[RMDB]
RNA sequence: GGGAACGACUCGAGUAGAGUCGAAAAGCAAGUGCCGCUGCAUAUUGCGACAUGAAGGCGAUUGCGAUCUCAUGGCGCAGUUCUUCCUGAAACUUGCGCCGCGCCGCGAUGAUGCGCGGGUGAUUGAACGCACUCAUCGCUUCGGCGAUGAGUGCGUAAAAGAAACAACAACAACAAC
Reactivity to DMS in 0.01 (KOAc 150mM, MgCl2 10mM, bicine 150mM(pH8.5), 24C), signal-to-noise 1, nucleotides 027 to 126: g040c050a020a170g010u000g000c030c030g020c060u000g000c200a170u000a090u000u000g000c000g000a040c050a070u020g000a090a040g000g010c080g030a120u000u000g010c020g000a100u010c020u000c040a050u000g010g010c010g010c020a010g010u010u000c090u000u000c050c100u000g000a100a110a020c020u000u020g000c000g030c020c000g010c140g010c000c020g040c040g000a120u040g010a080u000g000c000g040c020g000g000g000u030g010a180u010u010g000a140
Reactivity to 2A3 in 0.01 (KOAc 150mM, MgCl2 10mM, bicine 150mM(pH8.5), 24C), signal-to-noise 1, nucleotides 027 to 126: g000c020a020a000g000u010g040c000c070g010c090u070g000c040a000u050a070u150u260g080c020g030a040c060a070u100g090a130a000g050g000c010g040a100u100u220g050c060g010a120u010c020u000c020a030u070g000g070c010g000c010a000g010u000u000c020u090u040c070c060u070g020a100a030a010c090u080u040g000c000g020c050c000g000c010g050c000c000g010c000g080a120u210g120a100u150g060c010g000c030g030g000g030u080g080a120u040u190g060a040
An RNA of 177 nucleotides, treated with DMS and 2A3 and read out base by base.
For 2A3, 879 sequencing reads were counted.
For DMS, 1,067 sequencing reads were counted.